[RMDB]
This 207-nucleotide RNA was probed chemically with 2A3.
Conditions: 150 mM KOAc, 10 mM MgCl2 and 150 mM bicine (pH 8.5), 24 C.
2A3 adducts were read by reverse transcription with SuperScript II with manganese.
Reactivities are rounded to 0.1 and cut off at 0 and 3.
It was measured as part of the RMDB library M2RFPK.
Reactivities are given for positions 27 through 156.
RNA sequence: GGGAACGACUCGAGUAGAGUCGAAAAGUGUAGCGUCACUUUGAUGGCGGUACUAUGAAUUGAUGCAAGGUGUGGAGCGACCUUAAACAGUUCUGGUGGUGCUCUGAAUGGAGUGCUCUACGGAGAUUUAACUUAUGCACGUUCGCGUGCAUAAGAAGUGUUAACGACAGUUCGCUGUCGUUAACACAAAAGAAACAACAACAACAAC
Reactivity to 2A3 in 0.01 (KOAc 150mM, MgCl2 10mM, bicine 150mM(pH8.5), 24C), signal-to-noise 5, nucleotides 027 to 156: g060u050g000u020a050g080c000g020u000c000a030c080u210u170u210g220a300u050g040g000c010g010g030u010a020c020u050a070u110g060a050a070u110u070g050a060u090g100c090a060a000g010g000u030g010u070g030g020a010g000c020g010a010c000c000u050u060a090a080a000c020a040g000u030u000c010u020g050g020u030g010g010u030g000c000u000c010u060g150a080a070u200g050g000a010g010u030g000c000u000c010u040a030c060g130g020a040g020a090u060u130u140a060a030c000u000u000a000u000g000c000a010c010g000u030u020c080g000c010g060u000g000c000a000u000a000a000g000a010a010